The record gives the reactivity of an RNA of 207 nucleotides to 2A3 and DMS. The reactions ran in a buffer of 150 mM KOAc, 10 mM MgCl2 and 150 mM bicine (pH 8.5), at 24 C. For DMS the reverse transcriptase was MarathonRT. For DMS, 1,877 sequencing reads were counted. The data come from the RNA Mapping Database (RMDB), library M2RFPK. For 2A3, 1,598 sequencing reads were counted.
[RMDB]
RNA sequence: GGGAACGACUCGAGUAGAGUCGAAAAGCCUCCUCGCUUCCAUAGAAAGGGGACGGGGCAGAUCGCAAGUGCUACAACCGAGCGGUGGUAUCUGUCAAACUAAGCAGCCACUGCACAUCAAUUGUCUAAACGAUGCCGAUCUUCGGAUCGGCAUCAACACAGUAAUGAUGUUCGCAUCAUUACUGUGAAAAGAAACAACAACAACAAC
Reactivity to 2A3 in 0.01 (KOAc 150mM, MgCl2 10mM, bicine 150mM(pH8.5), 24C), signal-to-noise 3, nucleotides 027 to 156: g050c000c010u060c010c000u000c000g020c030u070u030c010c000a110u080a220g180a080a210a070g050g000g000g020a020c010g000g000g000g000c010a000g000a020u010c010g000c030a010a020g040u020g030c030u110a080c060a160a030c040c100g080a040g050c010g000g020u020g030g010u020a030u060c010u000g050u060c040a090a050a060c130u110a070a040g000c000a000g000c000c000a000c000u020g070c000a020c000a030u210c070a120a240u130u120g060u090c040u190a080a040a040c130g000a000u000g000c030c000g000a000u020c020u050u080c190g020g000a000u010c000g000g000c010a000u000c000a000a000
Reactivity to DMS in 0.01 (KOAc 150mM, MgCl2 10mM, bicine 150mM(pH8.5), 24C), signal-to-noise 1, nucleotides 027 to 156: g000c000c010u010c010c010u010c000g020c040u010u000c010c120a170u010a170g010a180a130a100g020g010g030g010a030c010g020g010g020g060c080a040g000a050u000c050g020c040a080a060g060u000g010c010u010a140c100a140a230c060c040g000a150g030c030g040g000u000g010g050u000a090u020c020u010g000u000c050a110a110a220c150u000a110a070g010c000a040g080c010c000a040c040u010g000c030a070c110a070u000c100a110a130u010u010g000u020c010u000a080a160a170c150g000a040u020g010c000c000g030a020u000c010u010u000c290g020g000a010u000c010g020g000c010a000u010c000a060a150